[RMDB]
RNA sequence: GGGAACGACUCGAGUAGAGUCGAAAAACUGCGCUCGGCAAGGGUUGCCAUCUUCAUGGCUUUUUGCGCGCCUGAUUUAGCCUGUUCGCCAAAGUCUUUUAAGUCCUCAACUGAUACUGCCCAUUCAGACAGAUGGUUAAGUCUGGGCUGAUGAAUAAUAGUGCCUUUUUUUCGAAAAAGGCACUAUAAAAGAAACAACAACAACAAC
Reactivity to 2A3 in 0.01 (KOAc 150mM, MgCl2 10mM, bicine 150mM(pH8.5), 24C), signal-to-noise 1, nucleotides 027 to 156: a000c030u030g090c000g000c050u070c150g060g000c050a050a070g040g000g080u240u060g010c010c000a010u080c030u090u100c130a090u070g090g000c030u060u100u030u120u090g020c040g010c000g030c000c020u070g050a160u070u070u110a040g000c000c030u020g020u010u090c040g000c000c010a080a060a030g040u000c030u030u160u070u030a050a050g010u030c010c010u020c030a090a040c090u030g020a030u080a170c030u020g020c070c010c000a010u030u040c010a020g010a070c000a010g040a020u010g140g060u130u220a120a120g000u000c010u010g020g020g070c000u000g010a020u010g050a020a080u210a120
Reactivity to DMS in 0.01 (KOAc 150mM, MgCl2 10mM, bicine 150mM(pH8.5), 24C), signal-to-noise 1, nucleotides 027 to 156: a140c000u010g030c100g070c020u040c140g020g060c040a120a130g000g010g000u000u010g040c000c050a020u000c100u010u000c070a120u000g030g010c030u000u000u000u000u000g000c020g010c070g060c010c040u020g010a140u000u000u000a100g020c040c000u030g010u010u010c040g000c000c040a070a060a130g030u010c020u000u000u000u030a100a110g020u000c040c010u000c040a040a140c080u050g040a130u000a040c040u010g000c010c030c030a160u010u000c060a070g000a090c030a000g000a110u000g040g020u030u000a160a170g000u000c030u000g040g010g040c000u000g040a040u020g010a110a100u010a100